[RMDB]
RNA sequence: GGGAACGACUCGAGUAGAGUCGAAAAUACGAGCGGGAUAAUUUCUACCGGCCCGUGAGGUAGCUUGCAGGAAGCAUGUUGGUGGAGAAUGUGGUGCCGCGGCCGGGAUUUGAACCCGGGUCACGGGGACUCCAUAUGUUUUCGAACAUAUGGAGUCAAAAGAAACAACAACAACAAC
Reactivity to DMS in 0.01 (KOAc 150mM, MgCl2 10mM, bicine 150mM(pH8.5), 24C), signal-to-noise 4, nucleotides 027 to 126: u010a080c080g010a180g000c030g010g000g010a100u000a070a100u000u010u000c040u000a060c020c020g010g020c030c020c020g020u000g000a080g010g020u000a040g010c110u000u010g000c090a090g010g000a070a080g020c040a060u010g000u010u000g010g010u000g010g000a070g000a070a060u000g020u000g010g010u000g010c020c020g010c070g010g020c010c010g000g000g000a090u010u010u010g010a110a150c020c000c000g020g020g020u010c020a020c020g000g000g000
Reactivity to 2A3 in 0.01 (KOAc 150mM, MgCl2 10mM, bicine 150mM(pH8.5), 24C), signal-to-noise 2, nucleotides 027 to 126: u190a060c050g000a000g040c030g000g030g020a030u060a150a110u140u190u010c020u100a050c000c000g070g000c020c010c010g000u010g020a050g030g000u020a020g040c080u050u090g000c020a030g020g130a060a010g040c050a060u140g070u170u140g100g030u040g010g040a080g030a080a120u160g000u050g040g010u070g020c000c000g000c000g000g000c020c000g010g030g020a070u240u170u250g060a060a080c030c000c000g060g020g030u060c020a040c050g020g000g010